[RMDB]
RNA sequence: GGGAACGACUCGAGUAGAGUCGAAAAGGACAACGCUUCGGCGUUGUCCAAACGCUCAACCUCUGAGCGCAAGAGUCGAACGAAUACAGUUCGACAUGAGGAAAAUCUCCCUCUUCGGAGGGAGAAAGGUAAGAGACUUGUUCGCAAGUCUCUUACCAAAAGAAACAACAACAACAAC
Reactivity to 2A3 in 0.01 (KOAc 150mM, MgCl2 10mM, bicine 150mM(pH8.5), 24C), signal-to-noise 2, nucleotides 027 to 126: g000g000a010c020a010a000c010g000c020u070u120c290g110g000c000g000u010u000g000u000c000c000a010a010a010c000g000c000u000c020a110a220c000c000u010c020u010g000a010g000c020g000c180a210a060g020a000g130u010c010g010a000a000c010g010a120a040u300a210c100a080g010u010u010c010g000a010c000a010u030g000a000g050g000a010a010a000a060u030c000u020c000c000c000u000c020u010u060c270g130g000a000g000g000g000a000g000a000a020a000
Reactivity to DMS in 0.01 (KOAc 150mM, MgCl2 10mM, bicine 150mM(pH8.5), 24C), signal-to-noise 1, nucleotides 027 to 126: g040g000a000c000a010a000c010g000c000u010u030c250g000g000c010g040u000u010g000u020c000c000a010a040a130c020g010c010u010c000a090a070c000c030u000c010u000g000a020g010c010g040c200a120a090g000a020g030u010c020g030a000a010c010g030a220a140u010a160c180a080g000u020u000c000g000a000c010a000u000g000a050g000g000a180a100a060a080u010c000u000c000c000c000u000c000u000u010c140g060g010a000g010g010g000a010g000a000a000a020

Description: An RNA of 177 nucleotides, treated with 2A3 and DMS and read out base by base. The DMS profile rests on 948 reads.